Chemical mapping of a 177-nucleotide RNA with DMS and 2A3. Values are in units of 0.01, from 0 to 300, in steps of 10. The DMS profile rests on 26,754 reads.

[RMDB]
RNA sequence: GGGAACGACUCGAGUAGAGUCGAAAACUGCCCUGGGUUUUCGCUGUCUUACAGAAAGAUUGUGCCUAAUUAGUUCGUCUCUUAAUCGGAUGGAAGUUGUGAAAUUUGUAAGGGCGGAUAAUUAACGCGAUAAGUUAUGUUUCGACAUAAUUUAUCGAAAAGAAACAACAACAACAAC
Reactivity to DMS in 0.01 (KOAc 150mM, MgCl2 10mM, bicine 150mM(pH8.5), 24C), signal-to-noise 7, nucleotides 027 to 126: c070u010g000c010c010c000u000g000g020g010u000u000u010u000c010g010c030u010g000u020c060u010u010a140c110a100g010a200a090a080g000a130u000u010g010u000g000c100c050u000a050a040u020u010a070g010u020u010c020g000u010c010u020c030u010u020a060a080u040c060g000g000a050u000g000g010a070a060g030u010u010g000u010g020a090a020a050u010u010u010g020u020a050a030g000g000g010c000g000g000a030u010a010a040u010u010a050a110c210g010
Reactivity to 2A3 in 0.01 (KOAc 150mM, MgCl2 10mM, bicine 150mM(pH8.5), 24C), signal-to-noise 5, nucleotides 027 to 126: c040u100g020c000c010c010u040g070g000g020u010u010u010u020c010g000c010u020g040u040c000u000u050a020c010a020g160a080a050a000g030a020u020u080g050u040g000c010c020u060a100a060u050u060a030g070u030u040c030g030u010c060u000c000u060u050a080a050u070c020g040g000a000u010g020g040a040a030g040u070u070g040u020g030a030a010a020u060u050u040g060u050a010a010g010g010g000c010g000g000a010u030a010a020u090u050a100a040c080g000